[RMDB]
RNA sequence: GGGAACGACUCGAGUAGAGUCGAAAACCAGGGCAAGUGAGGCGCAAGCCUCGCUGACGGCGUGGAAAGGGCUCUCUCUGAGGCCCGAGUACGCUGAAAGUGCCACAGAAACGUAGCUUUUCUGGCGGUUUAGAUAAGUCUUCGGACUUAUCUAAACAAAAGAAACAACAACAACAAC
Reactivity to 2A3 in 0.01 (KOAc 150mM, MgCl2 10mM, bicine 150mM(pH8.5), 24C), signal-to-noise 3, nucleotides 027 to 126: c010c000a020g000g030g000c030a050a020g000u020g030a000g000g010c000g000c070a060a010g000c000c000u000c000g010c000u000g010a020c000g020g020c040g000u040g040g080a150a130a100g050g000g000c040u050c000u000c010u010c160u300g020a030g030g000c000c000c010g000a000g010u020a000c000g000c000u000g060a060a040a000g140u090g030c020c010a070c010a050g140a020a080a010c080g100u110a050g030c080u040u080u050u040c010u010g040g000c070g030
Reactivity to DMS in 0.01 (KOAc 150mM, MgCl2 10mM, bicine 150mM(pH8.5), 24C), signal-to-noise 6, nucleotides 027 to 126: c000c000a230g010g020g010c010a130a040g030u000g010a010g010g000c010g020c300a110a150g010c000c010u000c000g020c000u000g010a300c070g010g010c020g020u000g010g010a080a170a240g010g000g000c000u000c010u000c020u010c160u000g010a030g000g010c000c000c000g000a080g000u010a020c010g000c010u000g010a040a120a120g000u000g010c000c010a180c090a050g000a050a030a050c130g000u010a110g010c120u010u000u000u000c010u000g000g010c140g020
Structure probing data (2A3 and DMS) for a 177-nucleotide construct. For 2A3, 4,813 sequencing reads were counted. It was measured as part of the RMDB library RFMREP. The reactions ran in a buffer of 150 mM KOAc, 10 mM MgCl2 and 150 mM bicine (pH 8.5), at 24 C. Values cover nucleotides 27 to 126. For 2A3 the reverse transcriptase was SuperScript II with manganese.